[RMDB]
RNA sequence: GGGAACGACUCGAGUAGAGUCGAAAAAUGCCGGUGACCAGGCUGGCGCCGAUCUGGAAGUUGCUGCCGUAGGCGGCCAGCGGGCUCAGCUCCAGGAACGGGGAGUCCGGGUCGACGAGCAGCUCGACACAACGGCGUUAUUCGUAACGCCGUUGUGAAAAGAAACAACAACAACAAC
Reactivity to DMS in 0.01 (KOAc 150mM, MgCl2 10mM, bicine 150mM(pH8.5), 24C), signal-to-noise 2, nucleotides 027 to 126: a120u010g020c030c020g020g010u010g020a140c040c040a120g010g010c010u000g000g000c020g040c040c020g020a120u000c060u010g010g010a110a140g000u010u000g000c030u000g010c010c030g000u010a160g010g000c010g030g010c020c020a020g010c010g020g010g000c020u000c040a140g000c050u030c000c050a110g010g020a070a100c180g000g000g010g010a050g000u000c010c030g010g020g000u000c010g010a040c020g010a210g000c050a020g010c020u000c090g010a300
Reactivity to 2A3 in 0.01 (KOAc 150mM, MgCl2 10mM, bicine 150mM(pH8.5), 24C), signal-to-noise 1, nucleotides 027 to 126: a000u060g010c000c010g000g090u060g050a150c030c040a070g100g050c040u040g050g040c050g100c030c010g040a110u080c050u100g070g000a120a100g140u190u140g060c090u030g070c030c020g080u070a100g240g000c010g010g060c020c030a060g150c000g020g000g000c020u010c030a070g030c000u060c020c020a070g160g080a060a110c100g020g040g040g020a000g020u000c000c000g110g000g000u010c010g000a040c010g010a080g000c030a020g000c000u040c040g060a040